[RMDB]
RNA sequence: GGGAACGACUCGAGUAGAGUCGAAAAGAAGACGUGACGAAAAGUCACGAAAAAUAAAACAGGCAACCUCCAGCCUGAAAAAGGGGGAAAGAUCGAAAGAUCACUCGUGGGAGACCACGAGAAAAGAGUAAAAUUUUAUAUUCGUAUAAAAUUUUACAAAAGAAACAACAACAACAAC
Reactivity to 2A3 in 0.01 (KOAc 150mM, MgCl2 10mM, bicine 150mM(pH8.5), 24C), signal-to-noise 1, nucleotides 027 to 126: g160a020a010g140a060c010g000u000g000a000c000g070a020a230a090a140g000u000c000a000c010g020a000a050a000a020a000u180a040a060a050a000c110a020g000g000c010a050a070c000c000u000c000c000a040g000c000c000u000g060a050a000a000a000a020g040g000g020g000g000a010a130a040g000a010u000c010g000a040a090a000g020a020u000c020a030c080u000c000g000u020g000g000g010a020g080a080c000c000a010c000g020a000g000a000a060a000a010g050a000

An RNA of 177 nucleotides, treated with 2A3 and read out base by base. It was measured as part of the RMDB library OK1LIB. The 2A3 profile rests on 1,079 reads. The RNA was probed in 150 mM KOAc, 10 mM MgCl2 and 150 mM bicine (pH 8.5) at 24 C.